[RMDB]
RNA sequence: GGGAACGACUCGAGUAGAGUCGAAAAGGGGUCUCCUCUUGGACCGAAUUCGACGUGUACUACCCACCGCUCCUGAAGCCUCCACGGGAGCGAGGUACACGCAAUGAAUUCGCUAGAGGAGACGGAGGCACCCAAAAGGAUGUGUUCGCACAUCCAAGGAUUGCUAUUUCUUCGGAAAUAGCAAUCCAAAAGAAACAACAACAACAAC
Reactivity to 2A3 in 0.01 (KOAc 150mM, MgCl2 10mM, bicine 150mM(pH8.5), 24C), signal-to-noise 2, nucleotides 027 to 156: g050g020g030g010u000c000u010c000c010u030c020u100u250g070g020a080c100c070g000a010a000u000u030c100g140a060c010g120u000g000u010a010c020u090a120c050c110c090a070c000c060g000c010u010c030c010u040g050a190a030g020c000c000u010c000c000a010c000g000g010g010a000g000c010g000a010g010g000u000a010c010a000c000g010c000a040a160u170g000a010a000u000u000c000g000c010u020a010g000a000g000g000a000g000a000c000g020g000a000g000g000c010a060c000c000c000a040a100a000a070g010g000a000u020g010u020g040u080u110c220g010c100a000c000a000u000c000c000a000a020

Conditions: 150 mM KOAc, 10 mM MgCl2 and 150 mM bicine (pH 8.5), 24 C.
This 207-nucleotide RNA was probed chemically with 2A3.
The 2A3 profile rests on 2,238 reads.
It was measured as part of the RMDB library RNAMAK.